Structure probing data (2A3 and DMS) for a 177-nucleotide construct. For 2A3 the reverse transcriptase was SuperScript II with manganese. The data come from the RNA Mapping Database (RMDB), library OK1LIB. DMS adducts were read by reverse transcription with MarathonRT.

[RMDB]
RNA sequence: GGGAACGACUCGAGUAGAGUCGAAAAGCUCUAGGAGACUAGAGCGAUACGUUAGAGAGCUCGUGGCAUGACUAACGGAUAGCCAGGUACAAGGUUGCCAGAGGACAUAGCUAUAGCUAUGUCCAAAGAGGAUACAUACCUUCGGGUAUGUAUCCUCAAAAGAAACAACAACAACAAC
Reactivity to 2A3 in 0.01 (KOAc 150mM, MgCl2 10mM, bicine 150mM(pH8.5), 24C), signal-to-noise 2, nucleotides 027 to 126: g000c000u000c000u000a050g010g020a050g050a090c000u010a000g000a000g030c000g000a020u020a030c020g020u040u010a070g040a020g020a010g100c020u020c110g180u130g070g000c020a050u100g010a070c000u030a050a000c010g000g010a060u040a030g080c000c040a040g000g060u070a060c030a030a060g060g040u070u010g020c000c000a020g040a060g080g000a000c000a000u000a000g010c020u110a050u080a300g000c000u010a000u010g000u000c000c000a000a000a000
Reactivity to DMS in 0.01 (KOAc 150mM, MgCl2 10mM, bicine 150mM(pH8.5), 24C), signal-to-noise 2, nucleotides 027 to 126: g020c000u000c000u000a000g010g000a190g010a190c010u020a000g000a000g010c000g020a010u000a040c070g010u010u000a060g000a300g020a270g050c060u000c140g000u030g000g010c070a060u050g000a220c060u000a010a050c010g000g000a100u000a060g000c000c010a080g010g010u020a110c160a050a070g000g000u010u000g000c030c020a130g020a280g010g010a020c000a000u000a000g000c010u070a120u040a150g010c000u010a000u000g000u000c000c000a020a020a070